[RMDB]
This 207-nucleotide RNA was probed chemically with 2A3.
RNA sequence: GGGAACGACUCGAGUAGAGUCGAAAAACCGAUGUUACCGUGUGUGUCCUGGUUUUUCCUUUACUACUAGAUGUGAUGGAAAAACUUGCUACCCCGGUAUUAGUACAAAUCAAAAAGUUGUGGAUUACAUUCUCGGAGUAACCUCGGUGAUACCAAGCAACAUAGACGACUUCGGUCGUCUAUGUUGAAAAGAAACAACAACAACAAC
Reactivity to 2A3 in 0.01 (KOAc 150mM, MgCl2 10mM, bicine 150mM(pH8.5), 24C), signal-to-noise 1, nucleotides 027 to 156: a000c000c000g000a020u040g000u010u010a000c000c000g000u010g010u010g020u000g010u120c010c020u030g020g090u000u000u020u020u000c020c000u030u000u000a010c060u010a010c010u090a060g110a300u090g120u010g000a010u000g010g010a010a010a000a010a000c020u060u020g030c020u040a130c020c090c100c120g120g030u100a050u050u060a010g000u040a050c070a070a070a060u120c040a000a110a140a120a060g150u130u150g030u060g050g000a000u080u180a050c000a030u170u030c000u100c110g100g040a130g090u010a000a050c030c030u020c020g050g040u010g010a000u070a060c040c030a000a010g080
The RNA was probed in 150 mM KOAc, 10 mM MgCl2 and 150 mM bicine (pH 8.5) at 24 C. 2A3 adducts were read by reverse transcription with SuperScript II with manganese.